[RMDB]
RNA sequence: GGGAACGACUCGAGUAGAGUCGAAAAGAUGCCGUCAAGACCCACGGCGAGACCCCGCGCUACGGCGUGGCGAUCCCUACCGGGUUCGAGACGUUCGAGGCGCGCAUUAGCCGGCUCGCCGGCUCGGGUAACCAGAAGUUUUCGAACUUCUGGUUACAAAAGAAACAACAACAACAAC
Reactivity to DMS in 0.01 (KOAc 150mM, MgCl2 10mM, bicine 150mM(pH8.5), 24C), signal-to-noise 8, nucleotides 027 to 126: g010a140u010g010c030c010g010u000c090a130a130g010a170c040c020c050a150c020g010g010c030g000a070g000a120c020c030c050c020g010c010g010c010u000a210c050g010g000c000g020u000g010g010c030g000a020u000c000c000c010u020a170c300c200g000g000g020u010u000c010g000a060g000a020c010g000u000u010c000g040a300g010g010c010g010c030g020c220a050u000u000a070g010c080c090g000g000c040u000c240g000c060c000g010g010c040u010c150g000g000
Reactivity to 2A3 in 0.01 (KOAc 150mM, MgCl2 10mM, bicine 150mM(pH8.5), 24C), signal-to-noise 3, nucleotides 027 to 126: g060a030u160g040c020c000g040u070c070a090a040g070a230c010c020c020a010c020g000g010c020g000a020g020a100c000c020c020c020g000c000g000c010u050a030c030g010g010c020g000u030g190g010c010g000a020u030c000c000c000u040a180c060c130g000g010g000u000u000c010g000a010g010a010c020g050u160u270c030g100a100g030g000c000g010c010g000c020a070u060u090a020g060c060c030g030g000c020u040c060g030c010c000g010g000c010u020c030g080g000
This 177-nucleotide RNA was probed chemically with DMS and 2A3. For DMS the reverse transcriptase was MarathonRT. For DMS, 8,420 sequencing reads were counted.